[RMDB]
RNA sequence: GGGAACGACUCGAGUAGAGUCGAAAAGCGGCGUUAACGUUGACUGGUGACAGACCACGUGCGCGAGGCGGACGACGCGAACAUCGACGAUCUGUUGGGCGACCUGGGCGGUACCGCGCGCGCCGAGCUGUGAUUCCUACUUCGGUAGGAAUCACAGAAAAGAAACAACAACAACAAC
Reactivity to 2A3 in 0.01 (KOAc 150mM, MgCl2 10mM, bicine 150mM(pH8.5), 24C), signal-to-noise 1, nucleotides 027 to 126: g030c000g010g010c040g030u060u100a120a040c050g030u050u070g050a100c050u020g000g010u060g090a030c000a010g110a090c000c000a020c030g060u130g010c010g000c010g020a040g020g140c000g040g000a010c060g060a000c020g040c020g010a040a110c060a070u150c030g030a030c000g050a110u070c030u120g180u070u100g110g040g000c020g000a080c040c000u000g000g090g000c040g010g060u030a080c020c000g010c030g000c020g000c000g060c100c010g000a030g010
Reactivity to DMS in 0.01 (KOAc 150mM, MgCl2 10mM, bicine 150mM(pH8.5), 24C), signal-to-noise 2, nucleotides 027 to 126: g010c050g010g010c030g020u000u000a080a070c060g000u000u010g020a230c040u020g020g010u010g010a120c020a050g010a110c040c070a090c080g010u010g020c030g020c010g040a070g010g020c040g000g000a120c030g000a050c060g000c040g010a080a090c170a110u010c040g030a060c050g000a070u010c070u010g000u010u000g020g010g000c050g000a080c030c040u000g010g010g010c050g000g000u000a060c050c030g010c010g020c020g010c010g000c030c020g000a130g030
An RNA of 177 nucleotides, treated with 2A3 and DMS and read out base by base. Values cover nucleotides 27 to 126. As a SHAPE reagent, 2A3 marks flexible, mostly unpaired nucleotides at the ribose 2'-OH. It was measured as part of the RMDB library OK2TRN.